[RMDB]
RNA sequence: GGGAACGACUCGAGUAGAGUCGAAAACGGCAAAAAAGCAUACUUGACCACCAAGGAUAAAAGAGAUCUUAUCCAAGGAUGCAAAAGAUAAUCUCACUUUUGACACCCACUGAUCUCGAACUUAAAGAAAACCGAGACUACUUCGGUAGUCUCGGAACGUUAAUUUACGCUUCGGCGUAAAUUAACGAAAAGAAACAACAACAACAAC
Reactivity to 2A3 in 0.01 (KOAc 150mM, MgCl2 10mM, bicine 150mM(pH8.5), 24C), signal-to-noise 4, nucleotides 027 to 156: c020g050g000c060a030a030a040a000a020a030g060c050a090u100a120c050u100u080g090a120c000c020a010c010c030a070a040g040g000a030u060a080a070a030a010g040a010g000a000u000c010u030u040a030u020c040c030a030a050g020g000a030u060g010c000a000a020a020a010g030a070u130a220a160u130c060u040c120a050c010u020u010u020u040g090a080c010a050c030c020c000a030c050u030g010a030u020c010u000c020g020a050a060c060u180u150a080a060a050g060a060a120a040a030c000c000g000a000g000a000c000u000a000c000u010u030c080g060g000u000a000g000u000c000u010c000g000g000a000a000
Reactivity to DMS in 0.01 (KOAc 150mM, MgCl2 10mM, bicine 150mM(pH8.5), 24C), signal-to-noise 1, nucleotides 027 to 156: c000g000g000c070a000a080a020a040a020a120g000c030a130u010a120c040u000u000g000a140c220c050a110c050c020a020a300g000g000a080u000a030a050a020a100g000a040g000a090u000c010u000u000a120u000c080c010a090a220g060g000a050u010g000c010a000a050a020a020g000a080u000a120a050u000c070u000c120a230c000u000u000u000u000g000a160c040a120c000c000c020a150c160u030g000a050u000c010u010c010g000a050a080c050u000u000a120a070a210g000a120a030a130a190c000c000g020a020g010a020c000u000a000c010u010u000c220g070g020u000a010g000u000c000u000c000g000g020a000a010

An RNA of 207 nucleotides, treated with 2A3 and DMS and read out base by base. As a SHAPE reagent, 2A3 marks flexible, mostly unpaired nucleotides at the ribose 2'-OH.